[RMDB]
Chemical mapping of a 207-nucleotide RNA with 2A3 and DMS. The RNA was probed in 150 mM KOAc, 10 mM MgCl2 and 150 mM bicine (pH 8.5) at 24 C. For 2A3, 739 sequencing reads were counted.

RNA sequence: GGGAACGACUCGAGUAGAGUCGAAAAGAGGAUCAGGGGGUCCUCGGGAACGCUGUCACGAAUGUAGGCUUGCAGGUGACCUUCCCUCUGCAGGGAAAAUUCAGGACAUUUCCCUCUCAGAGGAGGAGGCCGUUUUAUUCCCCGGGAGAGGACCAGAGCUAGCACUAGUAUUCGUACUAGUGCUAGCAAAAGAAACAACAACAACAAC
Reactivity to 2A3 in 0.01 (KOAc 150mM, MgCl2 10mM, bicine 150mM(pH8.5), 24C), signal-to-noise 1, nucleotides 027 to 156: g050a010g000g010a060u080c050a070g040g010g010g000g020u020c000c000u010c000g000g000g010a060a000c100g020c050u010g020u060c030a030c150g080a150a100u210g040u160a040g000g040c100u050u190g010c060a070g000g070u090g100a120c010c000u010u000c000c000c000u000c000u000g000c020a000g000g010g030a030a020a000a070u100u060c070a010g130g000a030c000a040u020u000u000c000c000c000u000c010u010c000a000g000a000g000g030a100g020g000a000g000g000c000c000g040u000u100u000u010a160u110u020c000c000c000c000g020g010g000a050g000a000g030g000a020c030c030a000g070a010
Reactivity to DMS in 0.01 (KOAc 150mM, MgCl2 10mM, bicine 150mM(pH8.5), 24C), signal-to-noise 1, nucleotides 027 to 156: g020a060g000g010a080u020c020a150g000g050g060g050g000u000c030c010u000c060g000g000g000a110a110c110g020c040u040g000u000c060a150c040g010a130a170u000g030u000a090g040g000c030u020u000g010c010a070g040g040u000g010a030c000c000u010u000c020c010c000u000c040u000g020c300a030g000g030g000a000a030a020a100u000u000c180a210g000g060a250c280a180u000u000u000c000c000c000u010c020u000c040a080g010a050g020g000a080g000g000a000g010g100c030c020g070u000u000u000u010a170u000u000c000c050c000c000g000g000g000a200g000a110g010g040a080c010c000a070g020a300